[RMDB]
Structure probing data (2A3 and DMS) for a 177-nucleotide construct. Conditions: 150 mM KOAc, 10 mM MgCl2 and 150 mM bicine (pH 8.5), 24 C. The data come from the RNA Mapping Database (RMDB), libraries RFM100 and RFMREP. Reactivities are given for positions 27 through 126. Values are in units of 0.01, from 0 to 300, in steps of 10. For 2A3 the reverse transcriptase was SuperScript II with manganese.
RNA sequence: GGGAACGACUCGAGUAGAGUCGAAAAGAUGGUAAUGGUAAACCGUUCUGCUCAGGUUCAGACUCCGGCAGGCCUGACGGAUACUGAGUCCAAAUGUCGUUAUCAGAUGAGUGACCAGCUCACGCUUACGAGUCUUAUGGUUCGCCAUAAGACUCGUAAAAGAAACAACAACAACAAC
Reactivity to 2A3 in 0.01 (KOAc 150mM, MgCl2 10mM, bicine 150mM(pH8.5), 24C), signal-to-noise 2, nucleotides 027 to 126: g090a020u070g000g060u130a130a050u050g030g030u130a180a150a010c020c010g060u100u040c010u020g070c020u000c040a050g000g030u060u050c020a010g020a060c050u030c010c000g000g000c030a000g000g070c000c000u050g010a010c000g000g000a040u060a190c050u040g010a000g080u000c000c000a050a120a020u120g040u060c050g020u060u090a160u140c070a060g040a160u030g010a030g050u120g080a100c010c000a000g000c000u010c000a000c040g000c010u030u010
Reactivity to DMS in 0.01 (KOAc 150mM, MgCl2 10mM, bicine 150mM(pH8.5), 24C), signal-to-noise 1, nucleotides 027 to 126: g040a100u000g000g010u020a030a190u020g010g000u010a160a080a100c000c070g050u020u000c000u010g010c080u000c000a040g000g010u000u060c070a030g000a120c110u000c010c000g000g000c020a040g000g020c170c120u000g010a090c020g010g000a080u000a040c010u000g000a050g000u010c010c040a060a090a010u050g030u010c000g030u000u000a070u020c090a090g000a070u000g000a040g000u020g000a080c070c000a270g000c000u000c010a000c070g010c150u000u000